Source information:
An RNA of 170 nucleotides, treated with 2A3 and DMS and read out base by base. For DMS, 91,429 sequencing reads were counted.
[RMDB]
RNA sequence: GGGAACGACUCGAGUAGAGUCGAAAACAUGAUGCUAGCUCUGCCAUUAAUAGACCACAACUCACAUUUGUGAAGAAUUUUAUUACUGCCAAUCCGGCAUGGAGUAAGGCAGUCUUUAUUUCGCCUUGAACACUAGGGUUCGCCCUAGUGAAAAGAAACAACAACAACAAC
Reactivity to 2A3 in 0.01 (KOAc 150mM, MgCl2 10mM, bicine 150mM(pH8.5), 24C), signal-to-noise 9, nucleotides 027 to 129: c050a070u110g010a030u070g060c030u020a010g000c000u000c020u020g020c010c000a020u080u100a050a050u050a070g040a020c000c020a030c020a090a070c030u070c030a040c020a160u070u120u170g030u020g020a060a090g040a060a050u040u080u050u060a100u080u120a020c020u000g010c010c020a030a040u020c030c020g150g020c200a100u240g040g000a020g010u160a100a070g010g000c000a000g000u000c010u030u080u060a100u020u050u070c060g060c020c010u040u080g050a060a010
Reactivity to DMS in 0.01 (KOAc 150mM, MgCl2 10mM, bicine 150mM(pH8.5), 24C), signal-to-noise 9, nucleotides 027 to 129: c020a060u040g010a070u000g010c030u010a050g000c000u020c020u030g040c030c030a050u040u050a010a010u010a060g010a030c050c000a050c130a030a050c080u040c040a050c080a200u020u020u010g010u000g010a060a060g020a070a050u010u010u010u010a060u040u040a050c050u030g000c020c020a050a110u010c040c020g020g040c140a060u080g000g030a000g000u040a080a070g020g030c000a020g000u000c020u000u000u000a040u030u030u020c080g020c100c040u020u050g010a080a130